Structure probing data (2A3) for a 177-nucleotide construct. Reactivities are given for positions 27 through 126. 2A3 adducts were read by reverse transcription with SuperScript II with manganese. High 2A3 reactivity points to a flexible backbone, as in loops and unpaired stretches.
[RMDB]
RNA sequence: GGGAACGACUCGAGUAGAGUCGAAAACUAAUUUUUUUUGUGGACCCAUUUUCGAUAUUUACUCACAAAUGGAAUUCAAGGGGAACAACUUCGGUCUCAGCACUUUAAUUAUUCUUCUCGUUCCCACAUCCCGAUCCCCUUUCGAGGGGAUCGGGAUAAAAGAAACAACAACAACAAC
Reactivity to 2A3 in 0.01 (KOAc 150mM, MgCl2 10mM, bicine 150mM(pH8.5), 24C), signal-to-noise 1, nucleotides 027 to 126: c040u060a100a110u050u100u090u000u000u070u030u050g060u030g040g040a100c000c000c000a030u000u000u000u050c000g000a000u000a190u280u040u000a050c010u010c000a030c050a050a100a040u130g040g010a000a030u000u080c000a070a140g000g000g000g020a020a040c000a000a000c000u050u030c080g110g000u000c000u020c020a030g110c020a090c110u160u000u000a100a000u150u080a080u090u040c050u040u030c040u020c020g000u000u000c000c000c000a000c000